[RMDB]
RNA sequence: GGGAACGACUCGAGUAGAGUCGAAAAUGAGACAAACACACUUCACAAUGUGCGGCAAAGAAACAUUGUUUAUGCAAAGGCACUUCGCAAUGUGUGCUCAAACAUUGCUUAUUCAAACACGCUUCACAAAAGAAUCAGUGGUUCGCCACUGAUUCAAGGUAACUCAAAAGUUCGCUUUUGAGUUACCAAAAGAAACAACAACAACAAC
Reactivity to DMS in 0.01 (KOAc 150mM, MgCl2 10mM, bicine 150mM(pH8.5), 24C), signal-to-noise 2, nucleotides 027 to 156: u000g000a190g050a160c060a120a100a070c030a060c020a040c020u000u000c130a120c160a080a030u000g020u000g000c000g040g080c030a070a070a160g020a130a080a070c050a090u000u000g030u020u010u010a070u010g030c040a060a110a100g020g010c000a030c040u000u010c100g000c070a040a030u010g020u010g040u000g050c030u010c050a040a110a070c030a050u000u000g000c020u010u000a090u000u000c100a060a090a060c060a080c070g030c030u000u000c020a110c080a080a080a140a180g000a030a000u000c020a020g030u000g010g050u000u010c300g080c030c010a020c010u000g000a000u000u000c000a030a070
Reactivity to 2A3 in 0.01 (KOAc 150mM, MgCl2 10mM, bicine 150mM(pH8.5), 24C), signal-to-noise 9, nucleotides 027 to 156: u130g020a020g040a040c060a030a170a000c050a010c020a000c120u100u100c090a030c060a080a070u070g010u030g020c030g030g030c040a060a060a110g110a060a140a010c030a060u040u050g060u050u130u090a070u120g030c040a070a070a070g090g000c010a010c000u070u070c050g010c050a020a040u050g010u000g010u010g020c040u080c120a040a050a010c010a010u010u030g000c000u050u120a110u120u100c060a050a090a040c040a020c130g050c020u070u060c060a050c030a110a110a030a040g000a000a000u000c000a000g000u000g020g030u030u040c170g020c030c000a000c000u000g000a000u000u000c000a000a000
An RNA of 207 nucleotides, treated with DMS and 2A3 and read out base by base. For 2A3, 10,112 sequencing reads were counted. DMS adducts were read by reverse transcription with MarathonRT. High 2A3 reactivity points to a flexible backbone, as in loops and unpaired stretches. Conditions: 150 mM KOAc, 10 mM MgCl2 and 150 mM bicine (pH 8.5), 24 C. For DMS, 3,470 sequencing reads were counted.